Chemical mapping of a 177-nucleotide RNA with 2A3 and DMS.
For 2A3 the reverse transcriptase was SuperScript II with manganese.
RNA sequence: GGGAACGACUCGAGUAGAGUCGAAAAGAAAGAAAGAAAGAGGGCCGAGUUACCUUUGAUCACCAGUAACUGAGAUUGUUUCUGAUACGGUUUCGUUUUCUGGCAAUCAAAAGAACUUGGACUCGAAUCCGAUAAUGGAUUUCGAUCCAUUAUCGGAAAAAGAAACAACAACAACAAC
Reactivity to 2A3 in 0.01 (KOAc 150mM, MgCl2 10mM, bicine 150mM(pH8.5), 24C), signal-to-noise 5, nucleotides 027 to 126: g150a020a060a010g070a030a090a010g090a030a070a030g020a040g030g130g110c000c010g000a000g010u000u080a300c020c000u010u000u010g020a030u030c030a000c030c010a000g000u010a000a020c050u170g000a010g010a020u020u020g050u060u140u100c130u240g060a100u090a230c010g000g000u000u000u000c010g010u000u000u040u050c000u000g000g010c020a030a000u000c010a000a010a010a000g010a010a000c000u010u010g000g010a020c000u000c010g010a000a020
Reactivity to DMS in 0.01 (KOAc 150mM, MgCl2 10mM, bicine 150mM(pH8.5), 24C), signal-to-noise 3, nucleotides 027 to 126: g020a140a080a090g000a050a080a110g010a090a110a160g000a080g000g010g020c010c000g010a010g000u000u010a090c050c050u000u000u010g020a000u000c110a240c040c010a010g000u000a000a000c020u060g010a010g010a000u000u000g000u000u010u040c300u060g010a100u010a030c030g000g000u000u000u000c010g010u000u000u040u000c010u000g000g010c070a170a000u000c010a010a010a020a020g000a020a010c010u000u020g000g000a220c000u000c000g010a110a120
The reactions ran in a buffer of 150 mM KOAc, 10 mM MgCl2 and 150 mM bicine (pH 8.5), at 24 C.